[RMDB]
RNA sequence: GGGAACGACUCGAGUAGAGUCGAAAAGAUAUGGACGUGGAAGAGCGAUAAGUCGAGUGUCGGAAACGACACCGACUUUUGACGCUCGCACGUCCUAAGUCAAACGAGAUGCCUUCGGGCAUCUCGAGAGAAUCGAUUAGUUCGCUAAUCGAUUCUCAAAAGAAACAACAACAACAAC
Reactivity to DMS in 0.01 (KOAc 150mM, MgCl2 10mM, bicine 150mM(pH8.5), 24C), signal-to-noise 6, nucleotides 027 to 126: g000a010u000a090u000g000g000a020c000g020u000g010g010a160a110g010a000g010c000g020a130u020a010a010g010u000c000g000a150g020u000g010u000c000g020g010a020a000a040c000g020a010c000a000c000c000g010a010c000u000u000u000u010g010a160c070g020c000u000c010g000c000a010c000g010u000c000c000u000a000a030g000u010c000a110a130a300c020g000a020g000a010u000g010c000c000u000u010c280g030g000g020c000a000u000c000u000c000g000a060
An RNA of 177 nucleotides, treated with DMS and read out base by base. For DMS the reverse transcriptase was MarathonRT. Source: RMDB library TTRDES, as collected in RNAgym. The reactions ran in a buffer of 150 mM KOAc, 10 mM MgCl2 and 150 mM bicine (pH 8.5), at 24 C.